[RMDB]
RNA sequence: GGGAACGACUCGAGUAGAGUCGAAAACAUAAGGCGGCUGACCAACGGUCUCCACUGUGAAGCACAAAUAGCGGGAUGUCGUCUGUUGGGCCGAGAAUGCGGGCCAAGCAGCGGGUUGAAGCGAUUUCAUUCCCUCUCACUUCGGUGAGAGGGAAUGAAAAGAAACAACAACAACAAC
Reactivity to 2A3 in 0.01 (KOAc 150mM, MgCl2 10mM, bicine 150mM(pH8.5), 24C), signal-to-noise 1, nucleotides 027 to 126: c010a090u150a040a120g000g010c000g000g000c040u070g060a060c020c020a150a030c070g060g000u000c020u130c000c000a100c020u070g120u160g120a000a000g070c030a000c000a130a160a180u130a070g020c050g030g000g070a040u130g000u000c050g000u030c000u010g000u080u010g010g060g020c090c040g000a000g130a110a040u300g240c000g000g000g000c010c010a060a020g000c020a000g010c090g070g080g000u000u050g160a050a000g000c000g040a050u000u000u020

Source information:
Source: RMDB library RFM100, as collected in RNAgym. This 177-nucleotide RNA was probed chemically with 2A3. Values cover nucleotides 27 to 126. For 2A3, 327 sequencing reads were counted. For 2A3 the reverse transcriptase was SuperScript II with manganese.